[RMDB]
RNA sequence: GGGAACGACUCGAGUAGAGUCGAAAAACGCUUCACAAUGUGCGGCAAAGAAACAUUGUUUAUGCAAAGGCACUUCGCAAUGUGUGCUCAAACAUUGCUUAUUCAAACACGCUUCACAUUGUGCGACAAAACUUCACGGUCUUCGGACCGUGAAGAACAUUGGAAAGUCCUUCGGGACUUUCCAAUGAAAAGAAACAACAACAACAAC
Reactivity to 2A3 in 0.01 (KOAc 150mM, MgCl2 10mM, bicine 150mM(pH8.5), 24C), signal-to-noise 4, nucleotides 027 to 156: a000c050g010c110u070u040c020a000c000a000a000u010g010u000g010c010g020g000c040a050a150a060g090a040a140a020c030a050u050u040g060u000u050u060a110u130g020c010a000a070a110g070g000c000a020c010u120u110c110g030c240a170a210u160g010u020g010u000g030c030u090c130a040a060a020c050a050u010u040g000c000u070u080a100u060u050c040a010a070a050c090a020c160g000c000u020u020c010a000c000a010u000u010g010u000g000c000g030a030c080a000a100a020a020c000u000u000c000a000c000g000g000u010c010u030u090c100g070g000a000c000c000g000u000g000a000a000g000a000a010
Reactivity to DMS in 0.01 (KOAc 150mM, MgCl2 10mM, bicine 150mM(pH8.5), 24C), signal-to-noise 2, nucleotides 027 to 156: a060c110g040c040u010u000c020a000c000a040a010u000g050u000g060c030g030g000c020a150a160a130g040a080a030a030c020a070u000u000g010u000u000u000a040u040g010c000a050a160a100g000g000c050a030c030u010u000c200g030c150a160a110u020g050u000g000u000g000c070u000c070a140a130a070c020a020u010u000g030c020u000u010a050u000u020c060a180a160a130c200a110c220g000c020u000u000c030a020c030a090u010u000g040u000g010c100g040a130c030a030a050a050a110c020u000u000c000a000c030g010g000u000c010u000u000c300g050g010a030c000c000g040u000g020a000a000g000a050a080